Chemical mapping of a 177-nucleotide RNA with 2A3 and DMS.
The DMS profile rests on 2,631 reads.
The reactions ran in a buffer of 150 mM KOAc, 10 mM MgCl2 and 150 mM bicine (pH 8.5), at 24 C.
[RMDB]
RNA sequence: GGGAACGACUCGAGUAGAGUCGAAAAGGUUCCGUCUUCGGACGGAACCAAAGAUAGUAUACCCUGUUGCAUGUAUACUAUGAUAUACCGUAAUGCAACGGAAAAUGCCUAGUUUCGACUAGGCAAACUCCCUCCAUGUAUUCGUACAUGGAGGGAGAAAAGAAACAACAACAACAAC
Reactivity to 2A3 in 0.01 (KOAc 150mM, MgCl2 10mM, bicine 150mM(pH8.5), 24C), signal-to-noise 3, nucleotides 027 to 126: g000g000u000u010c000c000g000u020c020u020u080c200g090g010a000c000g000g010a000a000c000c000a000a010a000g020a000u030a010g010u000a000u010a030c020c040c160u160g010u000u010g000c000a010u010g010u000a000u010a010c010u010a020u050g080a020u060a010u040a170c030c020g010u040a050a000u030g000c000a010a010c000g080g020a140a180a030a060u060g000c000c000u000a000g000u050u050u080c140g050a030c000u000a000g000g010c000a000a000a000
Reactivity to DMS in 0.01 (KOAc 150mM, MgCl2 10mM, bicine 150mM(pH8.5), 24C), signal-to-noise 2, nucleotides 027 to 126: g000g020u000u000c000c000g000u000c000u000u020c150g000g010a000c000g010g010a000a000c000c000a010a020a060g020a030u000a010g010u000a010u000a030c010c160c070u020g010u000u000g020c020a060u010g000u000a000u000a000c000u000a000u000g010a160u000a080u010a120c020c030g020u000a060a030u000g010c010a000a010c000g000g000a050a060a120a110u000g010c000c000u010a000g000u000u000u020c170g010a020c010u000a010g000g020c000a000a010a080